[RMDB]
RNA sequence: GGGAACGACUCGAGUAGAGUCGAAAAUCUAAGAGCGUAACACACACUCAGACUGUACGACAGUCUGACACACACAUACGCUAGUGUAUCGUGUGUGUGUUAUCGAUGUAGCACGAAAAUGAAAGAAUAUAACUGAGGCUUUCGAGCCUCAGUUAUAAAAAGAAACAACAACAACAAC
Reactivity to DMS in 0.01 (KOAc 150mM, MgCl2 10mM, bicine 150mM(pH8.5), 24C), signal-to-noise 2, nucleotides 027 to 126: u010c010u000a110a080g010a140g050c050g010u010a030a030c020a020c020a020c110a120c160u000c010a010g010a020c000u000g010u000a150c300g030a220c000a000g010u000c000u000g000a000c230a050c110a030c050a000c050a040u000a020c050g020c190u010a040g030u010g000u000a040u000c130g030u020g020u020g020u000g000u000g010u010u000a000u000c050g000a050u000g010u000a030g020c080a060c100g000a030a020a060a070u000g000a110a050a100g000a070a070
Reactivity to 2A3 in 0.01 (KOAc 150mM, MgCl2 10mM, bicine 150mM(pH8.5), 24C), signal-to-noise 1, nucleotides 027 to 126: u000c020u080a160a000g000a020g190c000g010u030a030a000c000a010c000a000c000a010c020u030c000a020g010a000c000u020g010u150a120c140g150a050c240a000g020u010c000u010g010a000c010a000c000a010c000a000c000a000u040a060c030g010c070u100a090g010u030g050u190a050u110c110g030u000g010u000g010u000g000u000g000u070u010a030u120c010g010a020u110g010u130a050g010c070a020c140g150a050a060a000a000u210g020a150a030a120g010a060a050

Overview:
Structure probing data (DMS and 2A3) for a 177-nucleotide construct. Values cover nucleotides 27 to 126. High 2A3 reactivity points to a flexible backbone, as in loops and unpaired stretches. For DMS the reverse transcriptase was MarathonRT. It was measured as part of the RMDB library M2PK90. The reactions ran in a buffer of 150 mM KOAc, 10 mM MgCl2 and 150 mM bicine (pH 8.5), at 24 C.